[RMDB]
The record gives the reactivity of an RNA of 207 nucleotides to 2A3. The data come from the RNA Mapping Database (RMDB), library M2RFPK.
RNA sequence: GGGAACGACUCGAGUAGAGUCGAAAAUAACACUGGCGGCUGCGUAUCACUCUAGGGUACGUGAUAGUGCGAUAUAAGAAGCACUGGUACAUGCCGGCAGGGACAGUUAAGAGAUGGCCCCAGUCUCAAAAGGGGUCAUUCUUCGGAAUGACCCCAAGUGGGCAAUGUAGUUCGCUACAUUGCCCACAAAAGAAACAACAACAACAAC
Reactivity to 2A3 in 0.01 (KOAc 150mM, MgCl2 10mM, bicine 150mM(pH8.5), 24C), signal-to-noise 1, nucleotides 027 to 156: u130a030a000c020a000c030u000g220g000c000g000g010c000u020g000c000g020u020a020u040c040a060c130u240c110u270a200g030g000g120u040a000c000g000u000g080a020u090a090g000u000g000c050g010a000u030a010u030a300a130g200a090a010g020c010a000c000u030g010g010u200a050c010a140u260g000c000c010g020g030c000a000g000g030g010a030c090a100g030u020u010a140a000g040a000g000a030u160g030g000c070c000c000c000a000g030u000c000u000c000a020a070a000a000g030g000g000g000u000c000a000u030u000c000u000u010c060g030g000a000a000u000g000a020c060c050c050c010a000a010
The reactions ran in a buffer of 150 mM KOAc, 10 mM MgCl2 and 150 mM bicine (pH 8.5), at 24 C.
Reactivities are given for positions 27 through 156.